[RMDB]
RNA sequence: GGGAACGACUCGAGUAGAGUCGAAAAACGAGGUGGAAGUGUGGUUUGACGACGGCGAGGAAAGCGUCGUUGUUGACGAUGGCACGGACAAACUCGACUUACAAGAUAACCUCGGGUUGCCGUCGCCGGGGACGCAACGCGCCGAACUCAAUCGGCCGUGAAAGAAGGAAUUCGUUCCUUCUUUCACAAAAGAAACAACAACAACAAC
Reactivity to 2A3 in 0.01 (KOAc 150mM, MgCl2 10mM, bicine 150mM(pH8.5), 24C), signal-to-noise 8, nucleotides 027 to 156: a010c050g010a030g040g020u060g030g060a100a090g030u040g020u050g070g070u040u060u120g040a030c030g010a000c010g010g020c040g020a030g010g090a070a020a010g010c010g030u100c020g010u070u010g020u030u110g050a040c050g020a100u080g010g010c010a000c010g020g060a060c060a040a080a010c000u010c010g020a020c010u060u090a030c070a190a060g020a300u090a100a040c020c010u000c000g010g000g000u010u010g010c010c010g010u020c070g000c000c000g000g000g020g030a010c020g000c030a020a030c010g000c010g000c010c000g020a080a050c010u000c070a020a090u040c000g040g010c030c030
Reactivity to DMS in 0.01 (KOAc 150mM, MgCl2 10mM, bicine 150mM(pH8.5), 24C), signal-to-noise 2, nucleotides 027 to 156: a090c040g010a060g000g000u000g040g020a060a080g000u010g040u020g000g020u000u010u000g070a050c010g040a080c050g030g030c030g040a040g030g050a100a050a100g000c060g020u000c010g030u000u000g010u000u030g000a060c060g000a130u000g000g030c000a110c110g000g000a090c090a070a010a050c020u010c010g010a040c080u000u000a140c110a200a070g000a300u010a070a060c170c010u030c030g010g010g070u010u010g030c000c000g040u000c050g030c010c020g000g020g020g030a160c050g010c060a080a080c070g020c080g020c000c000g000a140a170c150u010c270a090a140u000c030g010g050c030c060
Structure probing data (2A3 and DMS) for a 207-nucleotide construct. DMS adducts were read by reverse transcription with MarathonRT. The reactions ran in a buffer of 150 mM KOAc, 10 mM MgCl2 and 150 mM bicine (pH 8.5), at 24 C. DMS (dimethyl sulfate) methylates the pairing face of unpaired adenines and cytosines. It was measured as part of the RMDB library OK3TST.